[RMDB]
RNA sequence: GGGAACGACUCGAGUAGAGUCGAAAAGAACACGAGAAGGUUCUGACGGAUGCAGGCUACGACUGGCACGCGCAGCUGAGCAUGCACCUGAUGGGACCACAGGGUUUAGGCUACUAUCUGUGCGAGGUCUCCUGCUACUGUUCGCAGUAGCAGGAGAAAAAGAAACAACAACAACAAC
Reactivity to DMS in 0.01 (KOAc 150mM, MgCl2 10mM, bicine 150mM(pH8.5), 24C), signal-to-noise 2, nucleotides 027 to 126: g050a080a090c020a000c070g010a090g020a170a190g010g040u000u000c010u000g060a140c110g020g020a010u010g000c000a070g000g000c080u010a110c030g000a050c070u000g010g050c070a060c270g000c140g020c000a020g010c030u010g000a100g010c010a000u000g000c020a020c000c000u000g010a070u010g020g000g020a040c040c020a110c130a100g000g010g000u000u000u010a080g040g000c040u000a090c040u000a100u000c010u000g010u010g000c040g030a120g000g000
Reactivity to 2A3 in 0.01 (KOAc 150mM, MgCl2 10mM, bicine 150mM(pH8.5), 24C), signal-to-noise 2, nucleotides 027 to 126: g040a040a010c090a000c140g090a070g000a300a100g040g000u030u020c050u040g040a000c040g020g000a020u050g000c010a030g010g000c000u100a040c040g180a150c040u050g110g200c080a090c180g030c040g000c020a010g000c000u030g000a010g000c000a030u020g030c020a030c000c000u030g010a040u240g010g020g030a000c000c030a000c000a030g040g020g000u050u070u140a060g040g000c000u070a050c000u010a160u120c040u060g100u030g100c100g030a040g010g100

Chemical mapping of a 177-nucleotide RNA with DMS and 2A3. The 2A3 profile rests on 1,259 reads. The reactions ran in a buffer of 150 mM KOAc, 10 mM MgCl2 and 150 mM bicine (pH 8.5), at 24 C. Source: RMDB library OK2TST, as collected in RNAgym. For DMS the reverse transcriptase was MarathonRT.